Source information:
This 177-nucleotide RNA was probed chemically with DMS. Values cover nucleotides 27 to 126. The reactions ran in a buffer of 150 mM KOAc, 10 mM MgCl2 and 150 mM bicine (pH 8.5), at 24 C. It was measured as part of the RMDB library TTRINS.

RNA sequence: GGGAACGACUCGAGUAGAGUCGAAAAGAUAUGGAAUCAGGAGGCAGACGGCAGCGUCGUUUGACGAGAGUCGGAAACGACUCUCCGAGACGCUGCCGUCUGAACUACCUCACUGAUUCCUAAGUCACAUCUGGAUUAUCUUCGGAUAAUCCAGAUGAAAAGAAACAACAACAACAAC
Reactivity to DMS in 0.01 (KOAc 150mM, MgCl2 10mM, bicine 150mM(pH8.5), 24C), signal-to-noise 1, nucleotides 027 to 126: g030a080u000a300u030g010g010a030a000u000c010a000g000g010a030g000g010c000a030g030a030c000g010g000c000a020g000c000g040u010c000g000u000u000u000g030a280c300g000a000g000a020g070u000c010g000g010a140a110a300c020g000a000c000u000c000u010c000c000g000a100g000a050c030g010c010u000g020c010c020g010u000c000u010g010a060a030c040u010a300c000c020u000c000a150c010u000g010a020u000u010c010c000u010a030a070g000u000c000a160